[RMDB]
RNA sequence: GGGAACGACUCGAGUAGAGUCGAAAAUGACGAGAUGAAGUCCAGCUCCACCAUGACAGUCUGGGAGGGUAUAAGGAAGCUCCAGCAAGCUGGAUAUUACACUGCUAUUGACCUGGAGGCAGCUAAAGCUAAUACGUAGCUUCGGCUACGUAUUAGCAAAAGAAACAACAACAACAAC
Reactivity to DMS in 0.01 (KOAc 150mM, MgCl2 10mM, bicine 150mM(pH8.5), 24C), signal-to-noise 3, nucleotides 027 to 126: u010g040a030c060g000a070g000a060u020g000a100a150g010u000c050c080a050g000c030u020c030c030a090c110c060a070u010g020a100c120a080g020u000c060u020g000g010g000a050g010g000g000u020a080u010a080a080g000g010a070a110g000c060u000c010c020a050g020c110a080a040g000c030u000g000g000a070u010a060u020u010a050c120a060c060u000g010c050u000a120u010u000g000a100c140c040u000g010g000a130g020g020c120a000g020c050u000a040a060a070
Reactivity to 2A3 in 0.01 (KOAc 150mM, MgCl2 10mM, bicine 150mM(pH8.5), 24C), signal-to-noise 2, nucleotides 027 to 126: u090g030a010c060g020a010g050a180u120g040a060a020g030u000c030c030a000g000c000u070c030c020a060c020c010a030u080g020a060c020a080g040u090c000u030g010g010g000a050g050g030g010u070a090u030a150a070g150g010a070a010g020c020u000c000c030a000g000c040a040a010g030c010u000g020g000a000u020a020u040u020a030c070a000c010u070g040c000u030a080u110u150g000a030c000c000u000g000g030a050g010g000c020a000g000c030u120a130a050a000